[RMDB]
RNA sequence: GGGAACGACUCGAGUAGAGUCGAAAAGAUAUGGAGCUGAGCAUCGAUCGAUAGGUCGGAAACGACCUCAUCGGGAGCUCCUCCUAAGUCAAAGGAUUGUAGAUCACUUCGGUGAUCUACAAUCCAACAUCUCUCAGAACUUCGGUUCUGAGAGAUGAAAAGAAACAACAACAACAAC
Reactivity to DMS in 0.01 (KOAc 150mM, MgCl2 10mM, bicine 150mM(pH8.5), 24C), signal-to-noise 3, nucleotides 027 to 126: g010a050u000a300u010g000g000a010g010c190u010g010a030g010c020a250u010c110g000a040u020c040g020a010u000a010g010g000u000c000g020g020a070a060a280c000g000a010c000c000u000c200a020u000c000g000g000g000a050g010c000u000c000c000u010c000c000u010a030a080g000u000c050a090a090a160g000g010a010u000u000g030u000a000g000a010u000c000a020c000u010u010c200g010g020u000g020a010u010c000u000a000c010a010a000u010c000c010a020a100
Reactivity to 2A3 in 0.01 (KOAc 150mM, MgCl2 10mM, bicine 150mM(pH8.5), 24C), signal-to-noise 2, nucleotides 027 to 126: g060a020u080a050u200g040g000a000g040c270u150g090a000g000c110a260u290c060g140a100u040c010g000a040u060a030g000g000u000c010g020g000a080a050a000c030g000a010c000c020u020c020a010u000c000g000g030g010a010g010c010u000c010c000u000c000c000u020a140a040g030u000c060a080a070a100g030g000a000u000u000g000u000a000g000a000u010c010a030c030u040u130c300g020g010u000g000a000u020c000u010a000c010a010a000u010c000c000a010a000